[RMDB]
This 207-nucleotide RNA was probed chemically with DMS and 2A3. The reactions ran in a buffer of 150 mM KOAc, 10 mM MgCl2 and 150 mM bicine (pH 8.5), at 24 C. Values are in units of 0.01, from 0 to 300, in steps of 10. High DMS reactivity at an A or C suggests that its Watson-Crick edge is free.
RNA sequence: GGGAACGACUCGAGUAGAGUCGAAAACACAAUUCUCUAAGCGAUGAGAAGCGUGUGGAAAAUUAGGGAAGGGCUACGGCUAUAAUCCUAAGAAAGCAUAUCUACAAGCGGAGGUAUUCUCAGAACGAAAACCAUUUGGCGUUCGCGCCAAAUGGAAUCAAAUCCAAAUCUUCGGAUUUGGAUUUGAAAAAGAAACAACAACAACAAC
Reactivity to DMS in 0.01 (KOAc 150mM, MgCl2 10mM, bicine 150mM(pH8.5), 24C), signal-to-noise 1, nucleotides 027 to 156: c030a040c050a080a210u000u000c040u000c010u000a120a300g020c070g010a300u030g000a050g000a040a030g000c180g000u000g070u000g000g000a070a060a110a300u010u010a120g010g030g030a190a300g020g020g010c040u000a050c300g090g070c010u000a040u000a230a160u000c010c030u010a030a060g000a060a120a160g020c090a080u000a050u000c060u000a060c030a000a150g000c000g000g000a040g000g000u010a100u000u000c000u020c020a170g000a090a060c040g010a090a050a100a130c050c000a010u000u010u000g000g030c040g000u030u000c300g000c120g010c010c000a000a010a010u010g000g010a010a100
Reactivity to 2A3 in 0.01 (KOAc 150mM, MgCl2 10mM, bicine 150mM(pH8.5), 24C), signal-to-noise 2, nucleotides 027 to 156: c030a000c000a050a060u020u000c000u000c020u090a280a230g120c050g130a160u100g010a090g000a050a000g000c040g030u030g000u060g010g020a040a050a000a040u060u040a070g010g020g040a040a090g120g050g000c010u050a010c080g030g000c010u030a060u050a200a100u040c010c000u030a030a020g020a040a040a000g030c020a030u080a040u100c010u060a070c070a140a060g090c090g050g060a010g000g100u030a040u130u000c030u020c020a060g050a160a040c080g070a030a050a030a030c000c000a030u000u020u000g000g000c000g000u000u030c120g000c020g000c020c010a000a000a000u000g020g020a000a000
Source: RMDB library M2RFPK, as collected in RNAgym. For 2A3, 929 sequencing reads were counted.